[RMDB]
RNA sequence: GGGAACGACUCGAGUAGAGUCGAAAAGAUAUGGACGGAGGUACUACCCACCUCGAACGAUCGGAAACGAUCGUCCGAGAGGUACUCCGUCCUAAGUCAAACUGACACAUGUUCGCAUGUGUCAGAAGAACUAUAAACAGUUCGCUGUUUAUAGUUCAAAAGAAACAACAACAACAAC
Reactivity to 2A3 in 0.01 (KOAc 150mM, MgCl2 10mM, bicine 150mM(pH8.5), 24C), signal-to-noise 8, nucleotides 027 to 126: g040a050u170a080u200g010g010a000c010g010g010a030g120g170u170a110c050u100a090c040c060c060a220c060c000u000c010g000a010a000c000g000a000u010c000g010g020a050a030a040c010g000a010u000c010g000u000c000c010g010a020g020a070g000g000u010a010c000u000c000c000g000u000c000c000u000a020a010g040u020c060a060a060a140c010u010g000a000c000a000c000a000u020g030u120u140c300g040c200a000u000g000u000g000u000c000a000g000a010a010
Reactivity to DMS in 0.01 (KOAc 150mM, MgCl2 10mM, bicine 150mM(pH8.5), 24C), signal-to-noise 9, nucleotides 027 to 126: g010a100u010a160u010g010g010a020c000g010g000a020g010g020u010a050c200u000a080c060c040c290a300c130c010u000c000g010a020a000c000g010a010u000c000g020g000a100a050a180c010g000a010u000c000g010u000c010c000g000a010g010a090g010g000u000a050c000u000c000c010g000u000c000c000u000a010a060g010u010c060a120a130a270c000u000g000a010c000a010c000a000u000g010u010u020c280g020c000a010u000g000u000g000u000c000a010g010a080a070
Source information: Conditions: 150 mM KOAc, 10 mM MgCl2 and 150 mM bicine (pH 8.5), 24 C. An RNA of 177 nucleotides, treated with 2A3 and DMS and read out base by base. DMS (dimethyl sulfate) methylates the pairing face of unpaired adenines and cytosines. 2A3 adducts were read by reverse transcription with SuperScript II with manganese. DMS adducts were read by reverse transcription with MarathonRT.